[RMDB]
The record gives the reactivity of an RNA of 177 nucleotides to 2A3 and DMS.
RNA sequence: GGGAACGACUCGAGUAGAGUCGAAAAGCAUGUGCCAUUCCAGUGAUUGCUAAAUCAGGUUGAAGUUCUCGAAUACGUUGAAUUUGAUAAUAAUUAUCAGGUUUUUCAACAAUACGUGGCAUUGGAAAUUCGCUGUUAUAUUCGUAUAACAGCGAAUAAAAGAAACAACAACAACAAC
Reactivity to 2A3 in 0.01 (KOAc 150mM, MgCl2 10mM, bicine 150mM(pH8.5), 24C), signal-to-noise 2, nucleotides 027 to 126: g050c010a030u110g030u070g060c010c000a030u050u070c030c010a000g120u050g130a050u020u070g050c100u140a060a070a050u030c020a040g130g040u110u120g160a090a060g020u130u030c040u000c030g060a080a070u100a080c090g020u030u030g000a020a050u040u030u040g000a000u000a100a040u100a110a070u240u010a020u000c000a010g040g000u000u030u010u100u080c020a040a070c010a030a040u170a080c080g020u030g040g030c000a020u020u110g070g000a100a100
Reactivity to DMS in 0.01 (KOAc 150mM, MgCl2 10mM, bicine 150mM(pH8.5), 24C), signal-to-noise 6, nucleotides 027 to 126: g010c060a070u010g020u000g010c010c010a100u000u000c050c040a110g020u010g010a060u000u000g000c150u000a050a050a040u000c040a060g000g020u000u000g010a070a150g000u000u000c030u000c030g010a110a090u010a070c170g000u010u000g010a030a030u000u000u000g000a020u000a010a180u010a100a130u020u000a010u000c000a020g010g000u000u010u010u010u000c020a010a020c020a080a080u010a070c140g020u000g010g010c020a050u000u000g020g000a060a100